[RMDB]
RNA sequence: GGGAACGACUCGAGUAGAGUCGAAAAGGGAGCUGAAAGCCUUCCAGACAUUGUUUUCGCCGCGAAUGCAGCAAUAAUCAAGGGAAAUAAAGCGUACUUGGCAAGUUUCGCGCAUCCAGAGAGACAACAUCAUACCAGGAUUCGUCCUGGUAUGAUGAAAAGAAACAACAACAACAAC
Reactivity to DMS in 0.01 (KOAc 150mM, MgCl2 10mM, bicine 150mM(pH8.5), 24C), signal-to-noise 7, nucleotides 027 to 126: g010g000g000a110g010c030u000g010a090a110a150g000c140c010u000u000c030c040a130g000a110c170a090u010u010g010u000u000u010u010c080g030c040c040g020c080g000a100a070u010g010c050a080g020c040a060a050u010a090a080u000c050a060a100g000g010g000a030a060a090u010a080a060a100g020c060g010u020a110c060u010u020g000g010c070a060a100g000u000u010u000c050g010c050g010c080a070u000c040c030a100g020a130g000a060g010a070c100a070a210
Reactivity to 2A3 in 0.01 (KOAc 150mM, MgCl2 10mM, bicine 150mM(pH8.5), 24C), signal-to-noise 5, nucleotides 027 to 126: g030g020g010a020g020c050u120g140a110a070a010g040c020c010u020u000c010c000a010g040a050c060a070u050u060g050u060u070u060u080c070g020c060c020g010c030g020a100a030u130g000c040a020g010c020a080a140u110a110a040u140c030a020a060g070g010g080a030a110a070u160a080a110a010g060c030g030u020a040c010u040u040g030g000c030a060a120g020u030u060u050c040g010c010g000c040a020u050c030c020a040g040a000g000a000g020a100c030a050a020

Structure probing data (DMS and 2A3) for a 177-nucleotide construct. Source: RMDB library OK2TST, as collected in RNAgym. For 2A3, 6,964 sequencing reads were counted.